[RMDB]
RNA sequence: GGGAACGACUCGAGUAGAGUCGAAAAUCGAAAUCAUCGGAAGUGAUCCAGAUGACGGUCCUGCCAUGAGACCGCAACGAGAGCAUGUCGCAUCGAAUGGACUCGGGGAGUCGGCAGCUUGCCCCACUAAGGCAGACGUUGUUCGCAACGUCUGCAAGCGAUAAUACCCGUUCGCGGGUAUUAUCGCAAAAGAAACAACAACAACAAC
Reactivity to 2A3 in 0.01 (KOAc 150mM, MgCl2 10mM, bicine 150mM(pH8.5), 24C), signal-to-noise 1, nucleotides 027 to 156: u110c010g010a000a000a010u000c030a000u020c020g070g010a020a030g120u150g180a130u050c020c020a080g030a010u100g030a070c030g000g000u000c000c000u020g120c050c010a200u190g030a070g020a110c000c000g010c030a010a080c020g010a010g000a000g090c010a070u100g060u130c070g000c030a010u040c020g040a040a070u080g050g000a050c060u000c120g000g000g070g000a080g020u040c020g030g000c060a000g050c040u020u110g000c000c000c010c000a030c050u100a080a060g200g040c000a000g000a000c000g010u000u000g000u040u030c120g000c020a000a000c000g000u000c000u000g000c000a020a000

The record gives the reactivity of an RNA of 207 nucleotides to 2A3. It was measured as part of the RMDB library M2RFPK.